[RMDB]
RNA sequence: GGGAACGACUCGAGUAGAGUCGAAAAUGCCGCACACCAUAUAAUCAAAAAUGGUUUAAUUUUGCUUGUGUUUGCUUUUAUUUCCAAAGCAGUAUGCGCACAGUACAGAAAAAGGAAAAAUGUAGCUAUGAGAGACUCUUUGGUCCCUACAGGUUUACGCGUAAAUCAUAUUCGUAUGAUUUACGCGAAAAGAAACAACAACAACAAC
Reactivity to DMS in 0.01 (KOAc 150mM, MgCl2 10mM, bicine 150mM(pH8.5), 24C), signal-to-noise 1, nucleotides 027 to 156: u020g010c020c070g000c110a120c090a100c030c020a110u000a130u000a050a140u040c090a060a070a060a090a080u020g000g010u020u000u010a060a100u020u000u000u000g010c050u000u000g030u020g020u000u020u000g040c010u020u000u010u020a120u020u070u010c030c040a040a000a140g000c000a050g020u000a020u010g020c110g050c000a070c040a020g020u000a080c020a060g010a020a030a130a070a190g020g020a010a060a130a030a060u040g010u020a040g000c010u000a050u000g000a200g030a100g020a010c040u000c160u000u000u000g050g000u020c020c000c030u020a050c050a100g030g010u030u000u020a040
Reactivity to 2A3 in 0.01 (KOAc 150mM, MgCl2 10mM, bicine 150mM(pH8.5), 24C), signal-to-noise 3, nucleotides 027 to 156: u020g010c010c020g000c020a020c000a020c090c040a040u100a030u090a160a130u280c120a070a130a060a050a090u060g020g000u060u060u160a050a130u090u120u130u100g030c030u060u070g020u010g000u060u050u070g030c000u150u030u000u120a160u040u180u000c040c000a020a000a040g010c030a030g020u130a020u180g080c030g000c010a000c000a050g060u080a040c020a020g180a070a070a040a040a000g130g010a130a130a050a010a000u070g020u040a010g040c090u040a030u080g040a030g020a040g010a110c020u020c000u070u050u050g050g020u040c000c000c000u020a090c050a040g040g060u040u050u090a030